The record gives the reactivity of an RNA of 177 nucleotides to 2A3 and DMS. The data come from the RNA Mapping Database (RMDB), library M2PK50. 2A3 adducts were read by reverse transcription with SuperScript II with manganese. The RNA was probed in 150 mM KOAc, 10 mM MgCl2 and 150 mM bicine (pH 8.5) at 24 C. The DMS profile rests on 18,044 reads. High DMS reactivity at an A or C suggests that its Watson-Crick edge is free.
RNA sequence: GGGAACGACUCGAGUAGAGUCGAAAAGAACGCCACUUCGGUGGCGUUCGAAGAUCUACCACACGUAGAUCACUAUCGUGUGAGACAUCGUUAGAUGUCAAAUGGUCCGGAAGUUCGCUUCCGGAAAGUUAUGUCUUACUUUCGAGUAAGACAUAACAAAAGAAACAACAACAACAAC
Reactivity to 2A3 in 0.01 (KOAc 150mM, MgCl2 10mM, bicine 150mM(pH8.5), 24C), signal-to-noise 4, nucleotides 027 to 126: g000a000a010c000g000c010c000a010c010u050u070c200g100g000u010g000g000c010g010u000u000c000g000a000a000g010a020u020c020u070a120c010c050a040c010a010c080g010u020a000g020a180u150c070a060c130u110a110u200c080g010u040g010u010g070a130g000a020c000a000u000c010g060u080u110a080g000a010u020g040u000c010a050a030a070u120g070g020u010c000c000g010g000a000a000g000u040u160c220g020c120u000u000c000c000g000g000a020a000a000
Reactivity to DMS in 0.01 (KOAc 150mM, MgCl2 10mM, bicine 150mM(pH8.5), 24C), signal-to-noise 9, nucleotides 027 to 126: g000a010a010c000g010c000c000a010c000u000u020c200g030g020u000g000g010c000g000u000u000c000g000a110a100g000a080u000c030u010a090c100c050a040c080a040c050g010u000a020g000a120u010c300a100c110u000a030u010c060g010u000g010u000g010a300g000a010c010a000u000c000g000u010u020a080g010a010u000g010u000c010a050a030a090u000g010g010u000c000c000g010g000a020a010g010u000u010c200g010c010u000u000c000c000g010g000a000a010a060